RNA sequence: GGGAACGACUCGAGUAGAGUCGAAAAGAUAUGGACAGUCUAGGGAGAAUCGCCUACGCUAGUAUACUAAUCGGAAACGAUUAGUAUACUAGCGUAGGCAUUCAUCGAUCUAGAACUGUCCUAAGUCCUCUAAGAUUUACUUCGGUAAAUCUUAGAGAAAAGAAACAACAACAACAAC
Reactivity to DMS in 0.01 (KOAc 150mM, MgCl2 10mM, bicine 150mM(pH8.5), 24C), signal-to-noise 3, nucleotides 027 to 126: g020a120u020a300u010g000g000a000c000a010g010u010c000u000a000g010g000g000a100g000a000a010u000c300g040c010c000u000a000c010g020c010u000a030g010u000a000u010a000c020u000a000a010u000c010g010g000a160a100a250c000g020a000u010u000a000g020u000a000u000a000c000u000a000g010c000g010u000a000g000g050c010a000u000u000c010a260u010c200g000a120u020c000u000a000g000a070a090c010u000g010u000c000c000u000a010a080g020u000c060
Structure probing data (DMS) for a 177-nucleotide construct. It was measured as part of the RMDB library TTRINS.